This 207-nucleotide RNA was probed chemically with DMS. The DMS profile rests on 1,255 reads. The RNA was probed in 150 mM KOAc, 10 mM MgCl2 and 150 mM bicine (pH 8.5) at 24 C. For DMS the reverse transcriptase was MarathonRT.
RNA sequence: GGGAACGACUCGAGUAGAGUCGAAAAGUAGUGUUCGCACUACAAAAACCGUAGGCGUCAGUAACCAGCUGUUCGUUGAAACAUCUUUCGAAAGAGAGAUGUGGAGAACAGACCCUGGAAUCUGACGCCUAAACGGAAAAAUGGAGUUCGCUCCAAAGAUGGUUUAUGGAUUCGUCCAUAAACCAUCAAAAGAAACAACAACAACAAC
Reactivity to DMS in 0.01 (KOAc 150mM, MgCl2 10mM, bicine 150mM(pH8.5), 24C), signal-to-noise 1, nucleotides 027 to 156: g080u000a000g050u010g000u000u010c300g000c030a000c000u000a030c000a010a040a080a110a150c050c000g000u000a010g000g000c010g010u000c000a040g000u000a090a300c050c000a070g040c020u000g020u010u000c000g010u050u030g010a300a180a110c000a030u000c000u000u000u000c000g010a140a270a300g000a000g000a000g000a010u000g010u030g000g000a180g000a000a010c010a000g010a060c150c110c010u000g040g030a050a300u000c000u000g030a010c000g010c000c030u000a000a000a010c010g000g010a000a050a160a200a090u000g000g000a110g000u010u010c100g000c080u000c000c000a010a050a120
The data come from the RNA Mapping Database (RMDB), library RNAMAK.